[RMDB]
RNA sequence: GGGAACGACUCGAGUAGAGUCGAAAAGAUAUGGAUUGUCCCUGCGGUCGAAGAACAUUCGUCGGAAACGACGAAUGGGAGACCCAGGGAGCAAUCCUAAGUCAAAACAAAGGCUUCGGCCUUUGAACAUACUACUCACCUUCGGGUGAGUAGUAUGAAAAGAAACAACAACAACAAC
Reactivity to 2A3 in 0.01 (KOAc 150mM, MgCl2 10mM, bicine 150mM(pH8.5), 24C), signal-to-noise 2, nucleotides 027 to 126: g020a010u100a060u190g000g000a000u010u010g020u050c000c000c000u050g090c300g040g000u010c000g240a300a040g010a110a020c000a030u010u000c010g000u000c020g000g060a070a050a090c010g010a000c010g000a000a000u000g010g010g000a010g000a000c000c030c000a010g000g000g000a010g000c000a000a000u000c000c000u010a090a040g010u020c020a050a020a130a240c010a030a020a000g020g000c010u130u260c300g230g000c000c000u000u000u000g010a010a000
Reactivity to DMS in 0.01 (KOAc 150mM, MgCl2 10mM, bicine 150mM(pH8.5), 24C), signal-to-noise 3, nucleotides 027 to 126: g000a050u010a300u000g000g000a020u000u000g020u000c000c000c000u000g000c300g050g020u000c000g010a130a200g010a130a250c000a000u000u010c000g010u000c000g000g020a140a100a190c000g020a000c000g010a000a000u010g000g000g000a130g000a010c000c010c000a000g000g010g000a000g000c000a010a020u030c000c010u000a020a110g010u000c040a120a080a110a300c010a010a010a020g000g020c000u000u020c300g030g000c000c000u000u000u000g020a110a300
An RNA of 177 nucleotides, treated with 2A3 and DMS and read out base by base. For 2A3, 4,120 sequencing reads were counted. Reactivities are rounded to 0.1 and cut off at 0 and 3. For 2A3 the reverse transcriptase was SuperScript II with manganese. Conditions: 150 mM KOAc, 10 mM MgCl2 and 150 mM bicine (pH 8.5), 24 C.